[RMDB]
RNA sequence: GGGAACGACUCGAGUAGAGUCGAAAACGUCAGCUUUAUAGGUUAAUGAUUGAUAUUAUUUCCUAUUAUUGACUUCAUAGCUUGAUCACAUCACCAUUCUGAAAUAACAAUCAUAUCUGAUAAAUAGUGAUCAGUAUUACUUCGGUAAUACUGAUCAAAAAGAAACAACAACAACAAC
Reactivity to DMS in 0.01 (KOAc 150mM, MgCl2 10mM, bicine 150mM(pH8.5), 24C), signal-to-noise 4, nucleotides 027 to 126: c270g000u010c080a040g000c040u000u030u050a100u040a040g010g010u000u000a020a020u000g010a020u000u020g010a080u030a110u020u060a090u020u030u000c050c050u010a000u010u000a020u010u000g000a030c030u000u000c160a070u010a060g000c010u010u020g000a020u020c130a100c170a110u000c060a120c040c010a130u010u020c030u010g000a030a080a050u030a030a050c120a050a050u010c060a030u040a040u030c050u020g000a050u020a030a050a070u020a070g000
Reactivity to 2A3 in 0.01 (KOAc 150mM, MgCl2 10mM, bicine 150mM(pH8.5), 24C), signal-to-noise 8, nucleotides 027 to 126: c050g030u010c000a010g000c020u070u070u050a080u080a060g010g020u050u030a030a010u030g040a030u040u050g070a040u060a050u250u180a130u050u100u080c000c020u000a010u010u020a050u010u020g000a010c000u020u010c100a080u050a050g010c000u040u110g030a030u090c020a020c010a130u060c030a060c060c000a060u120u040c040u080g050a070a080a080u160a090a050c100a060a040u090c030a040u070a080u120c050u070g080a030u100a130a100a020u130a100g120